This 177-nucleotide RNA was probed chemically with 2A3 and DMS. For DMS the reverse transcriptase was MarathonRT. The RNA was probed in 150 mM KOAc, 10 mM MgCl2 and 150 mM bicine (pH 8.5) at 24 C. It was measured as part of the RMDB library TTRDEL.
[RMDB]
RNA sequence: GGGAACGACUCGAGUAGAGUCGAAAAGAUAUGGAUAGGUGUGCCAGAAUCCAUUCGGAAACGAAUGAUUCGGUAAUUCACUCAUCCUAAGUCAAAACUAACUCAGUCGUUCGCGACUGAGUUAGAACCUUUAGUUCCUGUUCGCAGGAACUAAAGGAAAAGAAACAACAACAACAAC
Reactivity to 2A3 in 0.01 (KOAc 150mM, MgCl2 10mM, bicine 150mM(pH8.5), 24C), signal-to-noise 3, nucleotides 027 to 126: g010a030u070a040u170g010g000a010u020a100g000g040u010g000u020g020c080c140a150g050a000a010u100c250c050a010u020u000c010g020g050a080a030a020c010g000a010a010u000g000a000u010u000c010g000g000u040a040a080u150u090c010a000c040u100c020a020u000c010c000u010a150a030g020u020c050a000a000a170a210c010u010a000a000c000u010c010a010g000u000c010g020u130u010c130g020c010g050a000c000u000g000a000g000u000u000a010g000a000a000
Reactivity to DMS in 0.01 (KOAc 150mM, MgCl2 10mM, bicine 150mM(pH8.5), 24C), signal-to-noise 3, nucleotides 027 to 126: g000a050u010a280u010g000g010a020u010a040g010g010u010g000u000g000c010c010a230g040a000a000u000c110c120a010u000u000c000g000g000a070a080a210c010g000a020a000u000g000a010u000u000c000g010g010u000a020a120u010u010c000a000c010u000c060a020u000c030c000u000a060a130g000u020c040a090a080a120a210c000u000a000a000c000u000c000a000g000u000c000g040u000u010c220g000c020g010a010c010u010g000a000g000u000u000a000g010a050a210